[RMDB]
RNA sequence: GGGAACGACUCGAGUAGAGUCGAAAAGGUGCCGAGUGAGGCUUAUCCCGGGGGUGACGCCUCGGUCCUCCCUUAGCAUCGGAGACCCGGGCCCCCUCCCAGGAAAGGGAACAGGGGGAAAUCGACCAACGCGGCCUGUUCGCAGGCCGCAAAAGAAACAACAACAACAAC
Reactivity to 2A3 in 0.01 (KOAc 150mM, MgCl2 10mM, bicine 150mM(pH8.5), 24C), signal-to-noise 3, nucleotides 027 to 129: g000g000u000g000c000c010g000a010g000u030g000a000g020g010c020u020u150a140u150c000c000c020g000g000g000g000g000u120g010a050c040g120c000c000u000c030g000g000u010c000c020u040c030c010c010u010u000a000g000c000a000u020c000g000g020a050g020a040c010c030c000g010g020g010c000c000c010c000c000u010c000c000c000a130g040g250a250a080a120g000g030g000a040a080c080a080g000g000g000g030g030a010a010a040u120c030g040a040c050c000a080a000c040
Reactivity to DMS in 0.01 (KOAc 150mM, MgCl2 10mM, bicine 150mM(pH8.5), 24C), signal-to-noise 3, nucleotides 027 to 129: g050g000u000g010c010c000g000a010g040u050g000a040g050g000c300u070u060a030u030c050c000c050g000g000g000g000g000u090g040a010c300g050c000c050u030c100g000g050u100c090c000u020c000c000c000u000u010a070g020c070a010u020c000g000g010a080g010a150c060c000c030g100g000g070c030c000c060c010c000u030c010c000c010a080g070g060a060a140a170g070g050g030a230a040c250a030g000g010g020g000g060a040a000a000u110c070g030a290c040c060a020a080c040

The record gives the reactivity of an RNA of 170 nucleotides to 2A3 and DMS. DMS adducts were read by reverse transcription with MarathonRT. For 2A3 the reverse transcriptase was SuperScript II with manganese. It was measured as part of the RMDB library 15KLIB. 2A3 is a SHAPE reagent: it acylates the 2'-hydroxyl of flexible nucleotides of all four kinds. The DMS profile rests on 3,922 reads.